[RMDB]
RNA sequence: GGGAACGACUCGAGUAGAGUCGAAAAGCUCUGAGAGACAGAUCGAACAACAAAGAGAGAUCCAAAAUCUUAGGGGAGAGAACGAAUCUGUCGUCUUCUCUAGGACAUUGUCGAUCAGAUGUCCAAAGAGCAUACAUUGGUUCGCCAAUGUAUGCUCAAAAGAAACAACAACAACAAC
Reactivity to 2A3 in 0.01 (KOAc 150mM, MgCl2 10mM, bicine 150mM(pH8.5), 24C), signal-to-noise 4, nucleotides 027 to 126: g020c010u000c000u000g010a010g010a000g010a010c000a010g020a010u020c020g080a070a080c030a040a040c020a050a280a000g110a010g000a000g000a020u010c010c010a010a010a020a120u000c010u000u010a010g000g000g030g000a000g000a010g010a060a030c030g020a050a090u140c100u200g190u040c050g100u030c000u000u000c000u000c000u000a010g000g000a000c030a090u040u080g010u010c020g000a010u000c000a010g010a040u060g050u000c000c010a030a080a010
Reactivity to DMS in 0.01 (KOAc 150mM, MgCl2 10mM, bicine 150mM(pH8.5), 24C), signal-to-noise 3, nucleotides 027 to 126: g000c100u000c010u000g030a080g020a270g000a000c010a040g030a000u000c000g010a300a220c070a070a170c260a070a120a120g000a050g010a300g000a000u000c010c170a040a120a110a240u000c010u000u000a010g000g000g020g030a000g000a150g000a040a040c000g010a110a160u030c100u040g000u000c000g010u010c000u000u000c020u000c000u000a000g000g020a010c040a070u000u000g000u000c000g010a100u000c010a030g000a030u020g000u010c000c000a120a090a030